[RMDB]
RNA sequence: GGGAACGACUCGAGUAGAGUCGAAAAGAUAUGGACCGUCAAAGCGGUCAAUGACGUCGGAAACGAUAAGACAGACCCUUUGAGCGGUCCUAAGUCAAAGCCCUAGGCGGUUCGCCGCCUAGGGCAAGGACUAAGUUUUCUUCGGAAAACUUAGUCCAAAAGAAACAACAACAACAAC
Reactivity to DMS in 0.01 (KOAc 150mM, MgCl2 10mM, bicine 150mM(pH8.5), 24C), signal-to-noise 1, nucleotides 027 to 126: g000a040u000a300u010g010g000a070c000c000g020u020c040a010a010a020g040c180g040g010u000c000a030a090u000g000a090c300g000u000c000g000g000a130a070a230c000g020a000u000a180a150g010a190c070a070g000a000c040c030c010u000u010u010g000a090g020c040g010g010u000c000c020u000a010a160g020u000c010a070a140a120g000c000c000c000u000a040g010g010c000g000g040u010u020c300g020c010c000g000c010c000u000a000g010g000g010c030a000a000
Source: RMDB library TTRDEL, as collected in RNAgym. The record gives the reactivity of an RNA of 177 nucleotides to DMS. Values cover nucleotides 27 to 126. The DMS profile rests on 581 reads. The reactions ran in a buffer of 150 mM KOAc, 10 mM MgCl2 and 150 mM bicine (pH 8.5), at 24 C.